[RMDB]
RNA sequence: GGGAACGACUCGAGUAGAGUCGAAAAUGAAUGGAAACUCCCUUUCUCAGUAGCCUCCUUGUAGUUCAUCCCGGUAGCCCAGUGUGAUUGCAGCCGCUGCCACCACCCAGACAGGAAGCCUCCCAGAAUCCUAUAUCAGAUUCGUCUGAUAUAGGAUAAAAGAAACAACAACAACAAC
Reactivity to 2A3 in 0.01 (KOAc 150mM, MgCl2 10mM, bicine 150mM(pH8.5), 24C), signal-to-noise 9, nucleotides 027 to 126: u080g050a020a050u090g020g080a090a090a100c070u120c000c010c040u000u060u010c040u010c000a080g030u060a030g020c000c000u010c010c020u030u050g080u100a050g020u070u050c020a040u050c030c000c010g020g040u050a030g020c010c010c030a050g020u040g020u040g110a120u040u140g020c020a020g020c020c010g020c030u030g010c010c010a030c010c000a020c000c000c000a020g030a100c010a000g020g030a030a020g020c000c000u020c000c010c000a020g070a030
Reactivity to DMS in 0.01 (KOAc 150mM, MgCl2 10mM, bicine 150mM(pH8.5), 24C), signal-to-noise 9, nucleotides 027 to 126: u030g000a080a070u010g000g000a100a090a120c110u000c030c010c020u010u000u000c010u000c040a090g010u010a110g010c040c020u000c020c030u010u000g010u020a060g010u010u010c080a120u000c030c010c010g010g010u020a080g010c030c020c020a070g010u020g020u010g000a080u010u020g010c060a070g010c040c050g010c040u000g010c030c030a050c040c030a060c030c010c020a090g010a080c090a060g010g010a100a110g010c070c030u000c000c000c020a130g000a100